[RMDB]
RNA sequence: GGGAACGACUCGAGUAGAGUCGAAAAGGAGAACCUGACCGGAACCGGGACGUUCCAGCCCGCCGAGAAAGCGCAGCAAGGUGGAUUUGCCGCAGCCGGAAGGGCCGAUCAGGCAGACGAUCUGCCACAGUAAUUAUCGCUUCGGCGAUAAUUACUGAAAAGAAACAACAACAACAAC
Reactivity to 2A3 in 0.01 (KOAc 150mM, MgCl2 10mM, bicine 150mM(pH8.5), 24C), signal-to-noise 2, nucleotides 027 to 126: g060g030a100g060a120a210c040c080u050g010a030c020c010g050g100a010a030c000c040g010g000g000a010c050g020u040u000c030c000a010g020c000c000c000g000c000c000g080a110g100a190a120a010g000c060g000c030a050g020c010a040a030g040g090u160g120g200a220u060u000u070g000c010c010g000c040a050g040c000c000g040g010a100a100g090g010g000c020c030g030a040u120c030a040g010g010c000a020g010a010c080g090a100u030c000u000g000c010c000a060
Reactivity to DMS in 0.01 (KOAc 150mM, MgCl2 10mM, bicine 150mM(pH8.5), 24C), signal-to-noise 2, nucleotides 027 to 126: g010g020a260g020a130a110c050c040u020g030a120c050c020g010g000a090a050c100c010g010g020g010a100c040g000u000u000c010c030a070g010c010c020c000g020c000c080g010a170g000a150a110a130g020c040g020c070a030g000c000a020a010g010g010u010g010g020a170u000u000u010g010c040c040g000c010a030g040c040c020g020g010a130a090g000g000g010c000c080g000a060u000c110a070g000g000c040a010g020a180c130g000a180u010c000u000g000c010c030a240
This 177-nucleotide RNA was probed chemically with 2A3 and DMS. Values cover nucleotides 27 to 126. For DMS, 1,405 sequencing reads were counted.